[RMDB]
RNA sequence: GGGAACGACUCGAGUAGAGUCGAAAAUAUAGCGCGCGCCGGCGCCGGCCGAUCGAUCGUAGCAUAUAUGCGCAUCGGCAUGCCGAUAUCGUACGCGAUGCGCAUUAGCGCCGUAUACGAUCGAUCGUCUUAAUUUAGAGUUCGCUCUAAAUUAAGAAAAAGAAACAACAACAACAAC
Reactivity to 2A3 in 0.01 (KOAc 150mM, MgCl2 10mM, bicine 150mM(pH8.5), 24C), signal-to-noise 6, nucleotides 027 to 126: u130a020u040a050g040c030g010c010g000c020g050c070c060g100g010c030g010c040c010g060g030c040c030g000a000u000c000g000a000u000c000g000u020a020g030c050a010u050a000u010a000u170g000c000g010c000a000u000c020g170g030c040a010u090g020c030c020g130a110u100a090u300c060g020u020a010c040g000c000g050a000u010g000c000g000c000a000u010u030a010g010c040g020c040c030g070u140a100u020a070c000g000a000u000c010g000a000u010c000g000
Reactivity to DMS in 0.01 (KOAc 150mM, MgCl2 10mM, bicine 150mM(pH8.5), 24C), signal-to-noise 9, nucleotides 027 to 126: u010a120u010a110g010c030g020c020g030c050g010c040c020g000g010c020g030c020c100g010g020c170c000g000a010u000c000g010a010u000c000g020u000a060g010c030a080u010a090u000a020u000g000c000g010c010a010u000c010g030g020c030a060u000g010c070c100g020a190u010a080u010c170g010u000a040c070g010c010g010a010u000g000c000g010c010a010u000u000a050g010c100g030c090c300g010u010a250u000a020c000g000a010u000c010g000a010u000c010g000
An RNA of 177 nucleotides, treated with 2A3 and DMS and read out base by base. DMS adducts were read by reverse transcription with MarathonRT. The DMS profile rests on 23,600 reads. Reactivities are given for positions 27 through 126. Source: RMDB library OK2TRN, as collected in RNAgym. Conditions: 150 mM KOAc, 10 mM MgCl2 and 150 mM bicine (pH 8.5), 24 C.